[RMDB]
This 177-nucleotide RNA was probed chemically with 2A3 and DMS. Values are in units of 0.01, from 0 to 300, in steps of 10.
RNA sequence: GGGAACGACUCGAGUAGAGUCGAAAAGAUAUGGAACUCCUUGAUCGAAAUGGCAGUCGGAAACGACUGUGCAUUGACGAAGUCACUGGGAGUUCCUAAGUCAAACCGCUCGGUUCGCCGAGCGGAAGGUGUGUUAAAUCUUCGGAUUUAACACACCAAAAGAAACAACAACAACAAC
Reactivity to 2A3 in 0.01 (KOAc 150mM, MgCl2 10mM, bicine 150mM(pH8.5), 24C), signal-to-noise 2, nucleotides 027 to 126: g020a010u020a010u030g000g000a000a000c000u040c010c020u050u050g130a300u300c220g080a090a050a020u020g050g000c040a000g000u000c020g040g010a030a000a010c010g020a000c000u000g010u050g060c000a010u000u070g040a060c050g100a130a050g130u130c030a020c090u020g000g000g000a000g020u000u000c000c000u000a010a000g010u020c000a060a060a090c000c000g000c020u010c000g120g000u090u060c300g100c070c000g000a010g000c050g000g000a010a040
Reactivity to DMS in 0.01 (KOAc 150mM, MgCl2 10mM, bicine 150mM(pH8.5), 24C), signal-to-noise 2, nucleotides 027 to 126: g010a010u000a110u000g000g010a020a010c010u000c000c000u000u000g020a150u010c100g040a040a030a010u000g000g000c010a010g000u010c010g020g010a020a020a020c000g010a020c000u010g000u020g060c010a000u010u000g000a150c290g020a110a210g000u000c040a220c130u010g000g010g000a010g010u000u020c000c000u000a000a070g000u000c000a120a110a290c000c020g000c000u000c020g010g000u010u000c210g040c000c000g020a000g010c000g010g000a010a030

The data come from the RNA Mapping Database (RMDB), library TTRDES.